[RMDB]
RNA sequence: GGGAACGACUCGAGUAGAGUCGAAAAGGUCAGGGCUGAUCGGAAACAGCAGCAGGUGAGUCCGCCUUAUGUGAAGGAUCGGCUGAAACACGAGGAAAUACUGAGCCAACGCAAGACGGUAGCCGAAAAAAUCUAGUUCACUUCGGUGAACUAGAAACAUUACAUGUGUCUUCGGACACAUGUAAUGAAAAGAAACAACAACAACAAC
Reactivity to DMS in 0.01 (KOAc 150mM, MgCl2 10mM, bicine 150mM(pH8.5), 24C), signal-to-noise 4, nucleotides 027 to 156: g010g030u000c000a080g030g020g030c050u010g000a090u010c020g000g000a180a070a150c070a210g020c030a060g030c030a080g000g020u000g010a120g010u010c010c020g000c020c020u010u000a080u000g010u010g020a100a190g000g000a090u000c030g010g030c020u000g020a140a100a100c050a120c070g000a140g040g000a070a080a120u000a060c040u000g000a110g000c030c010a060a150c050g000c020a070a100g000a130c060g020g030u000a080g000c010c000g020a000a030a050a040a080a110u000c000u000a000g000u000u000c010a000c020u000u020c290g020g010u000g030a010a020c000u000a000g000a010a050a110
Reactivity to 2A3 in 0.01 (KOAc 150mM, MgCl2 10mM, bicine 150mM(pH8.5), 24C), signal-to-noise 6, nucleotides 027 to 156: g040g030u070c060a030g030g030g020c020u030g050a040u060c040g040g050a120a100a030c050a040g090c020a010g030c030a030g020g030u040g040a040g060u030c030c020g030c020c010u090u050a160u100g090u030g070a070a030g040g010a040u060c030g020g000c040u030g060a050a060a000c090a010c070g030a070g020g110a070a020a030u180a100c100u090g020a020g040c010c020a030a030c050g000c050a050a020g050a020c040g040g040u050a020g020c010c050g000a100a000a000a000a000a010u020c000u000a010g000u010u000c010a010c000u010u040c170g080g000u000g000a000a000c000u000a000g000a000a000a000